[RMDB]
RNA sequence: GGGAACGACUCGAGUAGAGUCGAAAAGCCAUCGCUUUCGAGCGAUGGCAUUGCCCAAAGAGGACCUGGGGGUCUCUGGGCUGCUAAACUCAUCAGCCGUUCUACCGCUAAAUUUCGAUUUAGCGAACAGGAAGUAAGUAUUCGUACUUACUUCCUGAAAAGAAACAACAACAACAAC
Reactivity to DMS in 0.01 (KOAc 150mM, MgCl2 10mM, bicine 150mM(pH8.5), 24C), signal-to-noise 7, nucleotides 027 to 126: g010c000c000a010u000c000g010c000u000u000u010c160g010a020g020c000g010a010u000g000g010c000a010u000u000g010c000c000c010a040a090a110g000a090g010g000a040c030c020u010g020g020g010g030g010u000c010u000c030u000g010g010g010c000u000g010c110u000a080a060a030c020u000c010a120u000c040a010g000c010c000g010u000u000c010u000a150c120c040g010c000u000a000a010a010u000u000u010c150g010a040u000u000u000a000g010c000g000a100a180
Reactivity to 2A3 in 0.01 (KOAc 150mM, MgCl2 10mM, bicine 150mM(pH8.5), 24C), signal-to-noise 9, nucleotides 027 to 126: g000c000c000a000u000c000g000c010u090u070u170c270g120a010g000c010g000a000u000g000g010c000a000u000u120g000c000c000c000a060a190a010g080a030g040g030a040c040c060u200g260g110g070g010g000u010c000u000c010u020g010g020g000c010u020g000c030u100a080a040a030c010u010c010a050u020c020a020g000c010c000g000u010u010c040u160a300c020c020g000c000u020a020a010a020u100u110u080c150g050a020u010u000u010a000g010c000g020a070a030